Chemical mapping of a 207-nucleotide RNA with DMS and 2A3. For 2A3 the reverse transcriptase was SuperScript II with manganese. For DMS, 4,860 sequencing reads were counted. The RNA was probed in 150 mM KOAc, 10 mM MgCl2 and 150 mM bicine (pH 8.5) at 24 C. The 2A3 profile rests on 5,875 reads.
[RMDB]
RNA sequence: GGGAACGACUCGAGUAGAGUCGAAAAUUGCAAAUUUGCAAGUUCUGUAUCUAUAUGUUUCUGAAAAUACAGUAUAGCAAUAACAGUAGUUAAAUGGUUAGUAAUCAAGCAGAAUAACAGCACUGCUAGUCAUAAUAUGCUUCAUAGUGAAUAUUCACUGUGAUGAAAAAUUCGUUUUUCAUCACAGAAAAGAAACAACAACAACAAC
Reactivity to DMS in 0.01 (KOAc 150mM, MgCl2 10mM, bicine 150mM(pH8.5), 24C), signal-to-noise 3, nucleotides 027 to 156: u000u000g000c000a060a140a210u000u000u000g010c000a130a170g010u000u000c030u000g000u000a040u000c020u010a170u000a050u010g010u000u000u000c090u010g000a130a120a070a040u000a030c010a030g010u000a080u000a160g010c030a060a090u000a090a040c060a090g020u000a070g000u000u040a050a090a080u000g010g010u000u000a060g010u000a070a070u010c080a100a130g000c050a100g000a090a110u000a050a100c070a070g010c060a130c080u000g010c020u000a050g000u010c040a060u000a050a130u000a110u000g000c050u000u000c050a090u000a080g020u010g010a090a140u000a090u000u000c040a120
Reactivity to 2A3 in 0.01 (KOAc 150mM, MgCl2 10mM, bicine 150mM(pH8.5), 24C), signal-to-noise 8, nucleotides 027 to 156: u080u040g000c020a030a090a160u190u140u100g010c040a060a040g040u070u040c020u010g030u020a060u010c060u050a070u020a060u230g030u020u050u010c020u040g040a050a060a010a010u030a010c000a000g030u070a040u090a130g010c030a030a030u100a100a050c040a050g120u140a010g020u060u130a090a180a060u030g020g020u010u020a020g020u050a070a150u100c080a080a030g010c010a010g080a200a050u130a180a050c030a030g020c020a010c020u010g000c000u010a010g010u000c010a000u040a190a060u070a060u110g020c000u040u050c030a050u060a110g070u060g080a120a030u100a110u140u120c030a000